Source information
Chemical mapping of a 177-nucleotide RNA with 2A3. Conditions: 150 mM KOAc, 10 mM MgCl2 and 150 mM bicine (pH 8.5), 24 C.
RNA sequence: GGGAACGACUCGAGUAGAGUCGAAAAGCGGGUCUGCAGGCGUCUGGCCCAGCGCGGUGCCCACCAGCAGUCAUCGCCGAGCAGCUUCAUCACCGAUGGCACUAAAAACAUCCGCACCACGGUCGCGUCUGGAUCGGACGUUCGCGUCCGAUCCAGAAAAAGAAACAACAACAACAAC
Reactivity to 2A3 in 0.01 (KOAc 150mM, MgCl2 10mM, bicine 150mM(pH8.5), 24C), signal-to-noise 1, nucleotides 027 to 126: g050c030g000g000g000u000c070u130g050c080a020g080g070c030g030u030c120u070g030g010c060c030c030a040g000c050g000c010g020g020u050g010c000c010c000a050c000c080a020g010c010a010g030u010c010a000u060c030g000c030c000g060a050g050c030a000g030c000u100u000c010a230u060c010a000c170c000g000a010u020g040g040c120a010c080u080a050a000a110a090a000c100a030u010c000c000g050c020a000c110c000a010c000g160g030u090c010g000c000g010
It was measured as part of the RMDB library OK1LIB.
2A3 adducts were read by reverse transcription with SuperScript II with manganese.